Source information:
Structure probing data (2A3) for a 207-nucleotide construct. Values are in units of 0.01, from 0 to 300, in steps of 10. Source: RMDB library M2RFPK, as collected in RNAgym.
RNA sequence: GGGAACGACUCGAGUAGAGUCGAAAAGGGUGAGACCUAGGAACCGUAGGGGUAUUCUCAAAGGAAGCUUUUGGAGUGACGCCCAUGUAAGUGGGAUAUAACAACAGAACUCGUAUGAGUAGCCUAAUAAAUCGGACCUUCUUCGGAAGGUCCGAAACAGAACAUCCUGGUUCGCCAGGAUGUUCUGAAAAGAAACAACAACAACAAC
Reactivity to 2A3 in 0.01 (KOAc 150mM, MgCl2 10mM, bicine 150mM(pH8.5), 24C), signal-to-noise 1, nucleotides 027 to 156: g040g010g000u040g040a210g030a060c000c010u000a050g010g110a020a060c100c030g090u080a060g020g040g000g010u080a090u130u040c000u010c020a030a050a000g030g000a130a040g040c080u000u020u030u010g020g020a070g000u040g050a050c040g080c010c000c000a000u050g110u210a040a140g000u020g010g000g000a000u070a010u050a100a080c010a000a000c000a030g040a050a030c000u000c030g100u180a050u130g060a060g010u020a040g050c000c000u060a110a040u110a120a100a010u040c010g000g000a000c000c000u000u000c000u020u010c130g120g000a000a000g010g000u000c000c000g000a000a000a000